The data come from the RNA Mapping Database (RMDB), library OK1LIB. Structure probing data (2A3 and DMS) for a 177-nucleotide construct. The reactions ran in a buffer of 150 mM KOAc, 10 mM MgCl2 and 150 mM bicine (pH 8.5), at 24 C. High DMS reactivity at an A or C suggests that its Watson-Crick edge is free. The DMS profile rests on 8,771 reads. For 2A3, 2,101 sequencing reads were counted. DMS adducts were read by reverse transcription with MarathonRT.
[RMDB]
RNA sequence: GGGAACGACUCGAGUAGAGUCGAAAAUGUCUGUGUGUCGGCGCAACGGUAUACGCUCGAAUGUGCGGGUCGGAAUCGAAGCGUGGGUGAGAUUGUCCGUGCUGAUGUGUUCUCACGUGCGUGUGUCAAUCAUGGCGAUAUUCGUAUCGCCAUGAUUAAAAGAAACAACAACAACAAC
Reactivity to 2A3 in 0.01 (KOAc 150mM, MgCl2 10mM, bicine 150mM(pH8.5), 24C), signal-to-noise 4, nucleotides 027 to 126: u130g050u030c070u010g110u020g050u010g030u060c030g020g020c020g000c070a090a060c040g040g040u110a120u050a080c080g020c010u020c020g110a170a140u120g040u070g120c010g050g000g000u090c030g000g040a000a080u040c030g060a140a000g000c000g020u060g000g090g000u080g010a060g000a080u090u180g030u000c020c010g040u030g030c080u100g020a130u070g040u020g030u060u010c010u000c020a040c090g100u060g020c030g010u070g020u010g020u040c000
Reactivity to DMS in 0.01 (KOAc 150mM, MgCl2 10mM, bicine 150mM(pH8.5), 24C), signal-to-noise 3, nucleotides 027 to 126: u020g050u010c070u010g020u000g010u020g020u000c060g020g020c040g000c040a060a150c080g000g040u010a070u020a100c110g000c040u010c020g020a070a120u040g010u020g000c050g010g000g020u010c030g000g000a030a110u020c050g030a100a130g000c050g020u000g000g020g010u000g010a060g000a040u020u010g000u020c030c020g000u030g020c040u020g010a050u040g000u010g000u020u000c000u000c010a040c080g000u000g030c060g000u000g000u000g000u000c120